[RMDB]
RNA sequence: GGGAACGACUCGAGUAGAGUCGAAAAGGAUGAUCUGGCCCCGGCCAGUUAUCCGAAUUAGUACCGGGAUUGCAUCGUCGAGCCGUCAGGGGCGAAGACGAGAACCUGAAAGCACGAAGCACAGGGCGGUGCGGGUGCGAGAUAUAACGCCCAACAAGCUAAUGAGCUAGUUCGCUAGCUCAUUAGCAAAAGAAACAACAACAACAAC
Reactivity to DMS in 0.01 (KOAc 150mM, MgCl2 10mM, bicine 150mM(pH8.5), 24C), signal-to-noise 1, nucleotides 027 to 156: g000g000a010u000g010a030u000c000u000g010g030c000c000c240c170g070g050c050c010a020g000u000u000a000u010c050c010g010a100a070u010u000a140g000u010a220c000c030g010g000g000a130u000u010g010c090a290u000c000g020u000c020g030a300g010c000c000g020u020c110a180g020g050g000g030c050g010a090a240g020a020c000g000a110g000a040a080c000c000u000g020a060a040a160g030c020a110c000g000a240a190g000c090a070c180a210g140g010g030c030g000g030u000g000c120g000g000g010u000g040c050g040a050g010a150u000a030u010a080a070c030g000c000c000c020a000a060c050a240a300
Reactivity to 2A3 in 0.01 (KOAc 150mM, MgCl2 10mM, bicine 150mM(pH8.5), 24C), signal-to-noise 1, nucleotides 027 to 156: g000g010a000u020g000a000u050c000u030g020g000c030c030c060c080g080g000c010c000a000g000u010u000a000u000c000c010g000a020a040u120u070a060g060u040a030c020c010g000g090g000a090u100u190g080c070a090u030c000g000u000c030g000a020g000c000c020g120u280c200a140g210g000g000g000c020g080a060a000g000a000c000g000a000g000a000a010c000c010u120g040a150a040a000g020c000a000c050g180a140a000g000c040a030c060a090g000g000g000c010g000g010u020g030c040g040g050g000u010g030c070g040a010g000a000u220a000u050a090a050c010g020c010c000c000a010a040c080a010a010
Background
The record gives the reactivity of an RNA of 207 nucleotides to DMS and 2A3. As a SHAPE reagent, 2A3 marks flexible, mostly unpaired nucleotides at the ribose 2'-OH. The RNA was probed in 150 mM KOAc, 10 mM MgCl2 and 150 mM bicine (pH 8.5) at 24 C. DMS adducts were read by reverse transcription with MarathonRT. The 2A3 profile rests on 996 reads. Values are in units of 0.01, from 0 to 300, in steps of 10. Values cover nucleotides 27 to 156.